Annotation
Structure probing data (DMS and 2A3) for a 177-nucleotide construct. Conditions: 150 mM KOAc, 10 mM MgCl2 and 150 mM bicine (pH 8.5), 24 C.
RNA sequence: GGGAACGACUCGAGUAGAGUCGAAAACGCUUCCUGUCCGCUCUCCGACGUCGCCGCUCGCCGCUCCGCCCGGAUGCCGCCGGCUCGUCACGGACUCGCGCGUAACCCUCCUCCGCUUCAUCGGUUAAAAACACUGACUAUUCGUAGUCAGUGUUUUAAAAGAAACAACAACAACAAC
Reactivity to DMS in 0.01 (KOAc 150mM, MgCl2 10mM, bicine 150mM(pH8.5), 24C), signal-to-noise 7, nucleotides 027 to 126: c130g000c100u010u010c020c010u010g020u020c040c040g000c140u020c060u010c060c040g020a080c070g020u000c080g010c040c020g000c090u010c080g020c030c070g000c050u010c040c030g000c050c050c080g010g010a060u010g010c040c060g000c140c020g000g000c030u000c030g010u000c050a150c080g000g000a070c030u000c060g010c300g010c030g010u010a070a130c050c020c020u000c020c020u000c010c020g020c080u000u010c080a090u010c030g000g010u010u000a040
Reactivity to 2A3 in 0.01 (KOAc 150mM, MgCl2 10mM, bicine 150mM(pH8.5), 24C), signal-to-noise 8, nucleotides 027 to 126: c050g020c040u110u060c010c010u010g030u030c010c010g030c030u040c020u040c070c050g060a060c030g020u050c040g010c020c000g030c020u050c020g030c010c000g000c020u010c010c010g080c020c030c030g020g010a060u130g020c010c000g020c010c000g010g000c000u010c020g040u020c010a030c030g020g020a040c010u020c030g020c000g000c000g030u050a090a080c000c000c000u030c000c000u020c000c010g040c010u100u050c030a110u070c030g090g030u090u110a050